[RMDB]
Chemical mapping of a 177-nucleotide RNA with DMS and 2A3. The RNA was probed in 150 mM KOAc, 10 mM MgCl2 and 150 mM bicine (pH 8.5) at 24 C. Source: RMDB library TTRDEL, as collected in RNAgym. Values cover nucleotides 27 to 126. 2A3 adducts were read by reverse transcription with SuperScript II with manganese.
RNA sequence: GGGAACGACUCGAGUAGAGUCGAAAAGAUAUGGACCAUGUAGGGAGAUCCCCGUCGGAAACGACCGGCGAUCGAAGAACUAUUUGGUCCUAAGUCAGCGACAUUUCAAGUUCGCUUGAAAUGUCAAGACUUUCACUUACUUCGGUAAGUGAAAGUCAAAAGAAACAACAACAACAAC
Reactivity to DMS in 0.01 (KOAc 150mM, MgCl2 10mM, bicine 150mM(pH8.5), 24C), signal-to-noise 3, nucleotides 027 to 126: g010a030u000a000u010g000g030a000c010c010a020u000g000u010a020g020g010g000a010g010a020u010c010c050c020c170g010u000c010g000g000a000a020a020c010g010a020c010c300g020g000c300g000a020u010c000g000a100a150g000a210a300c000u000a000u000u010u000g020g010u000c000c000u000a000a030g000u000c010a110g010c150g000a000c010a000u000u000u000c000a010a010g000u010u020c240g020c000u000u000g000a020a010a000u000g000u010c000a060a080
Reactivity to 2A3 in 0.01 (KOAc 150mM, MgCl2 10mM, bicine 150mM(pH8.5), 24C), signal-to-noise 2, nucleotides 027 to 126: g010a000u020a010u050g000g000a000c000c000a010u000g000u020a020g010g000g080a140g010a030u000c000c030c000c000g000u000c000g000g000a010a020a010c000g010a000c020c070g000g040c160g030a010u010c000g110a300a070g030a050a000c010u010a020u020u010u020g010g000u000c010c000u000a010a000g010u010c010a020g110c010g130a000c000a010u000u000u010c000a010a000g000u020u130c200g080c120u000u010g010a020a010a000u020g000u010c000a010a000
Reactivities are rounded to 0.1 and cut off at 0 and 3.